[RMDB]
RNA sequence: GGGAACGACUCGAGUAGAGUCGAAAAUGUCCGUGUCCUGGUCAUUACUACAGCCGUGACAACAUUGUGUUAGGUGCUUCUGGGGCUGCUGUAACUUUAGAAUGUGGCAAUUGUAAAACCGUAUGGAAUAACGUGAGCAAUUCGUUGCUCACGUUAUAAAAGAAACAACAACAACAAC
Reactivity to 2A3 in 0.01 (KOAc 150mM, MgCl2 10mM, bicine 150mM(pH8.5), 24C), signal-to-noise 2, nucleotides 027 to 126: u050g050u030c010c020g000u030g030u040c010c010u030g020g040u020c030a030u020u170a050c060u010a030c050a030g000c010c030g060u060g030a030c030a130a030c010a040u050u130g100u020g060u120u100a020g080g010u030g010c020u040u040c030u070g000g150g000g030c030u040g010c020u020g020u100a010a060c020u010u030u050a090g030a130a040u050g000u020g050g010c000a010a100u050u090g070u080a050a080a020a000c040c050g080u070a130u180g050g010a060
Reactivity to DMS in 0.01 (KOAc 150mM, MgCl2 10mM, bicine 150mM(pH8.5), 24C), signal-to-noise 3, nucleotides 027 to 126: u010g000u010c020c030g010u000g010u010c030c060u000g010g020u000c070a080u000u010a080c070u010a080c130a090g010c040c020g010u000g010a080c110a090a110c120a070u010u000g010u000g010u000u000a100g020g020u000g000c030u010u010c050u000g000g000g030g020c030u010g000c050u000g010u000a060a050c100u000u000u010a070g010a050a050u010g010u010g010g010c040a060a080u000u000g010u000a040a040a070a140c050c020g000u030a090u010g010g010a180
Annotation:
Conditions: 150 mM KOAc, 10 mM MgCl2 and 150 mM bicine (pH 8.5), 24 C. Structure probing data (2A3 and DMS) for a 177-nucleotide construct. It was measured as part of the RMDB library OK2TST. For DMS, 3,629 sequencing reads were counted.